An RNA of 177 nucleotides, treated with 2A3 and DMS and read out base by base. For 2A3 the reverse transcriptase was SuperScript II with manganese. Source: RMDB library M2PK90, as collected in RNAgym. The 2A3 profile rests on 7,144 reads.
RNA sequence: GGGAACGACUCGAGUAGAGUCGAAAAGCAACUUAGAUCGUUCUAUUAACGAACACGCGCGGAUCGUCGGUGGUCGGCGAGCCCACGGACGUACUUGAUCGCGCGAACGAGUAAAAAUCGCCGGCAACUGAAUUGAAUAGUUCGCUAUUCAAUUCAGAAAAGAAACAACAACAACAAC
Reactivity to 2A3 in 0.01 (KOAc 150mM, MgCl2 10mM, bicine 150mM(pH8.5), 24C), signal-to-noise 5, nucleotides 027 to 126: g040c010a000a070c040u050u120a080g040a150u120c030g010u020u000c040u050a270u220u210a160a060c080g030a020a010c060a010c070g010c000g010c010g060g070a100u080c010g030u000c050g150g010u010g000g030u020c020g000g030c010g000a060g130c020c000c000a000c000g070g000a000c000g020u060a050c050u100u210g080a110u280c010g000c010g000c000g000a010a000c000g010a010g030u090a000a070a040a000a030u000c000g010c020c010g030g030c020a060a060
Reactivity to DMS in 0.01 (KOAc 150mM, MgCl2 10mM, bicine 150mM(pH8.5), 24C), signal-to-noise 4, nucleotides 027 to 126: g010c090a090a070c070u000u010a080g010a080u000c050g010u000u000c050u010a300u010u010a060a090c110g000a030a060c080a210c080g000c000g010c020g010g010a060u000c010g010u000c000g000g040u000g010g000u000c020g000g010c010g010a030g010c220c000c000a020c010g000g000a020c020g030u020a100c170u000u010g010a090u000c020g000c010g010c010g010a030a030c080g010a090g000u000a020a060a020a030a030u000c000g020c000c000g020g010c200a070a140